Structure probing data (2A3 and DMS) for a 177-nucleotide construct. For 2A3, 2,538 sequencing reads were counted. The RNA was probed in 150 mM KOAc, 10 mM MgCl2 and 150 mM bicine (pH 8.5) at 24 C. High DMS reactivity at an A or C suggests that its Watson-Crick edge is free. It was measured as part of the RMDB library 15KREP.
[RMDB]
RNA sequence: GGGAACGACUCGAGUAGAGUCGAAAAACAGAGGUUGAUCCCGACCUAUCUGCUUUCUAUGUUAAGGAUGGUAAAUACUUUACAAGUGAACCACCCGUAACAUAUUCACCAGCUACAAUUUUAGCUGCCAUAGCAAUACCUUCGGGUAUUGCUAUGGAAAAGAAACAACAACAACAAC
Reactivity to 2A3 in 0.01 (KOAc 150mM, MgCl2 10mM, bicine 150mM(pH8.5), 24C), signal-to-noise 3, nucleotides 027 to 126: a000c020a000g030a020g030g000u020u000g020a230u050c060c030c020g000a000c010c020u030a140u060c020u010g010c020u040u120u000c020u030a010u020g000u000u020a040a020g010g000a010u010g010g000u040a150a160a040u090a070c000u030u060u100a100c110a150a030g010u010g020a020a020c000c000a000c010c000c020g020u000a010a010c000a000u020a090u110u130c070a050c100c010a020g000c010u050a050c100a300a300u100u110u100u080a030g000c000u010g010
Reactivity to DMS in 0.01 (KOAc 150mM, MgCl2 10mM, bicine 150mM(pH8.5), 24C), signal-to-noise 2, nucleotides 027 to 126: a040c000a000g010a010g010g000u000u000g000a210u000c070c060c030g000a030c000c000u010a120u000c000u000g000c040u000u000u000c050u000a000u000g000u000u020a030a040g000g010a020u000g000g000u000a060a100a100u000a020c020u000u010u000a190c200a120a080g000u000g040a240a040c010c000a000c010c000c000g020u000a000a010c010a000u000a020u010u000c040a040c140c010a010g000c030u000a020c250a120a140u000u010u000u010a020g000c030u000g000